Record summary:
Structure probing data (2A3 and DMS) for a 177-nucleotide construct. For 2A3 the reverse transcriptase was SuperScript II with manganese. The 2A3 profile rests on 1,863 reads. Source: RMDB library RFM100, as collected in RNAgym. The DMS profile rests on 2,394 reads.

[RMDB]
RNA sequence: GGGAACGACUCGAGUAGAGUCGAAAAGCCCAGAAGCCUCCCCUCAAAAUCGUUUCAGUCCAAAAUUGAUUCGGCGGCCCUGUCAUGAGGCCGAAACGAAGGCACGUACCCCUUCGAAUGGCGUCGGCACCAGGACAGUUUUCGAACUGUCCUGGUGAAAAGAAACAACAACAACAAC
Reactivity to 2A3 in 0.01 (KOAc 150mM, MgCl2 10mM, bicine 150mM(pH8.5), 24C), signal-to-noise 3, nucleotides 027 to 126: g060c000c000c030a020g090a080a010g040c000c010u020c000c000c000c000u050c050a080a080a040a070u040c050g010u010u010u060c040a080g030u040c040c030a030a060a140a180u070u070g030a080u050u000c020g040g000c000g000g020c040c010c010u130g060u120c030a050u070g050a050g010g020c000c000g020a010a010a010c000g030a030a020g020g010c030a000c150g070u090a050c010c000c000c000u000u020c000g070a060a060u050g030g000c010g020u010c020g040g000
Reactivity to DMS in 0.01 (KOAc 150mM, MgCl2 10mM, bicine 150mM(pH8.5), 24C), signal-to-noise 2, nucleotides 027 to 126: g000c000c000c000a190g020a120a120g080c050c030u000c010c030c020c040u000c040a130a040a060a120u000c020g000u000u010u010c000a050g000u000c100c110a050a050a100a130u020u020g000a070u000u000c060g000g020c050g000g030c010c000c000u030g020u000c110a020u020g030a200g000g050c000c050g010a070a050a060c010g000a020a080g000g050c030a090c060g040u000a070c140c080c000c000u000u060c020g020a010a050u010g000g010c020g020u000c030g000g010